[RMDB]
RNA sequence: GGGAACGACUCGAGUAGAGUCGAAAACGAGGAGAGCAUGUCGGCGUGGCGACAGGGUGAGGCCGGGGGUCAGCCACGUGGCCCCAUUCACUCACGCGUGAUCCUUGAUGCCCAGACUCGGCAAGUCAUUACGGAAAAGAUUCGUCUUUUCCGUAAUAAAAGAAACAACAACAACAAC
Reactivity to DMS in 0.01 (KOAc 150mM, MgCl2 10mM, bicine 150mM(pH8.5), 24C), signal-to-noise 9, nucleotides 027 to 126: c050g010a030g010g010a050g000a210g020c030a300u000g010u000c030g010g000c080g020u000g010g010c020g010a040c050a070g010g000g010u000g000a040g000g020c210c190g010g010g000g010g020u010c080a050g010c030c060a040c100g010u000g010g010c010c000c000c010a060u010u000c050a110c020u000c020a130c160g000c070g010u010g000a200u000c010c010u000u000g010a110u000g010c010c000c020a140g000a070c030u000c060g000g010c110a130a080g000u010c080
Reactivity to 2A3 in 0.01 (KOAc 150mM, MgCl2 10mM, bicine 150mM(pH8.5), 24C), signal-to-noise 8, nucleotides 027 to 126: c030g000a010g010g010a030g000a000g010c030a040u040g030u040c010g030g070c050g030u050g060g030c020g020a020c070a100g050g080g000u020g000a010g030g070c120c100g090g000g000g010g010u060c030a000g060c050c030a060c050g050u030g030g020c000c000c000c000a020u060u050c030a030c010u010c010a020c020g050c030g030u050g030a030u010c000c000u020u020g020a040u100g030c000c000c010a000g010a040c030u060c070g080g040c080a050a010g040u030c020

An RNA of 177 nucleotides, treated with DMS and 2A3 and read out base by base. It was measured as part of the RMDB library OK2TST. The RNA was probed in 150 mM KOAc, 10 mM MgCl2 and 150 mM bicine (pH 8.5) at 24 C. 2A3 adducts were read by reverse transcription with SuperScript II with manganese. For DMS, 29,748 sequencing reads were counted. The 2A3 profile rests on 27,204 reads. DMS adducts were read by reverse transcription with MarathonRT.